[RMDB]
RNA sequence: GGGAACGACUCGAGUAGAGUCGAAAAGAAGAGAAAGGAGACACAAGGACAGUCUCCAGAGGUUCCUAAGGCCUCGAUCGCGCCUGCCGGGAAUCAUGGACACCCGGUUGUCCAUGAUAGAAGAAGACCCUAGCUCACUGUUCGCAGUGAGCUAGGGAAAAGAAACAACAACAACAAC
Reactivity to 2A3 in 0.01 (KOAc 150mM, MgCl2 10mM, bicine 150mM(pH8.5), 24C), signal-to-noise 1, nucleotides 027 to 126: g040a040a000g070a000g040a030a100a020g070g000a040g010a000c020a020c150a200a040g210g020a110c020a020g000u000c000u020c000c000a000g000a020g000g000u020u030c030c010u100a010a050g070g000c000c000u030c030g000a040u080c010g000c000g060c110c010u040g120c000c000g000g000g050a000a020u040c000a000u000g020g000a000c020a040c090c120c010g060g010u200u050g000u000c000c000a000u000g000a000u050a060g150a140a000g030a050a000g010a050
Reactivity to DMS in 0.01 (KOAc 150mM, MgCl2 10mM, bicine 150mM(pH8.5), 24C), signal-to-noise 2, nucleotides 027 to 126: g000a100a130g000a030g000a130a280a080g000g020a030g000a010c030a100c150a190a160g020g010a110c250a140g000u000c010u000c000c000a050g000a050g030g040u000u000c050c050u000a050a070g000g000c000c000u000c030g020a100u030c060g000c210g000c010c000u000g020c050c130g010g000g000a050a020u000c000a010u000g000g000a000c000a060c000c230c140g000g000u050u000g000u000c020c000a000u000g000a020u000a070g010a100a120g020a130a150g000a200